[RMDB]
RNA sequence: GGGAACGACUCGAGUAGAGUCGAAAAGGGGAUGAUCGGUUUCGACGUCGGACACUGCGACGGGAGAAGCGGGCCGAGAAUGUAGAGUCAUCUCGUUAAUGUCCUCUGCAAAACAAUAGGUGCUAAGUCUAAUAACCGCACCGAUUUCGCCCUCGCUCCUACUCCAAGUGUUCGCACUUGGAGUAGGAAAAGAAACAACAACAACAAC
Reactivity to 2A3 in 0.01 (KOAc 150mM, MgCl2 10mM, bicine 150mM(pH8.5), 24C), signal-to-noise 1, nucleotides 027 to 156: g040g000g000g000a040u110g000a030u060c000g030g080u030u170u160c040g070a100c030g010u010c000g000g090a060c050a050c240u300g010c010g000a020c000g040g000g070a160g020a030a000g050c020g000g060g000c040c030g000a010g020a060a140u050g030u080a040g000a000g020u040c000a100u030c060u030c010g070u040u150a080a020u080g010u050c020c000u000c000u030g000c000a030a070a100a060c090a070a030u050a090g040g000u010g040c000u220a130a040g070u060c080u080a060a120u130a300a000c070c010g000c000a010c000c000g000a000u000u030u050c040g010c000c000c000u020c050g000c010u000